[RMDB]
RNA sequence: GGGAACGACUCGAGUAGAGUCGAAAAGAUAUGGAAACUUGAACGGUGAUGACCUCACUCGGAAACGAGUGAGGCAAGCCGAAAGUUUCCUAAGUCAAAGGCAUCAUUCGUUCGCGAAUGAUGCCAAGCCUCCUUUAUACUUCGGUAUAAAGGAGGCAAAAGAAACAACAACAACAAC
Reactivity to DMS in 0.01 (KOAc 150mM, MgCl2 10mM, bicine 150mM(pH8.5), 24C), signal-to-noise 1, nucleotides 027 to 126: g010a040u020a280u020g000g000a010a010a000c000u000u000g000a100a110c020g000g050u020g020a160u030g000a300c000c000u000c000a000c020u000c000g000g020a070a080a170c000g020a020g010u000g000a000g030g010c000a000a210g020c010c000g000a040a020a010g000u000u000u000c010c000u010a040a050g010u010c020a100a060a070g010g000c010a000u000c000a010u010u000c000g010u000u010c300g000c000g020a010a000u000g010a030u000g040c000c000a000a040
Reactivity to 2A3 in 0.01 (KOAc 150mM, MgCl2 10mM, bicine 150mM(pH8.5), 24C), signal-to-noise 2, nucleotides 027 to 126: g020a000u050a010u150g010g030a020a020a000c000u040u040g100a300a100c050g000g000u040g050a160u300g110a170c000c000u010c010a020c000u020c010g000g060a010a040a010c000g020a000g000u010g000a000g000g000c000a000a000g000c000c000g030a070a010a020g000u000u030u000c000c000u000a080a010g060u000c050a040a060a150g030g000c000a000u000c000a010u020u000c010g040u060u120c240g000c000g290a000a000u020g010a010u040g000c000c000a000a010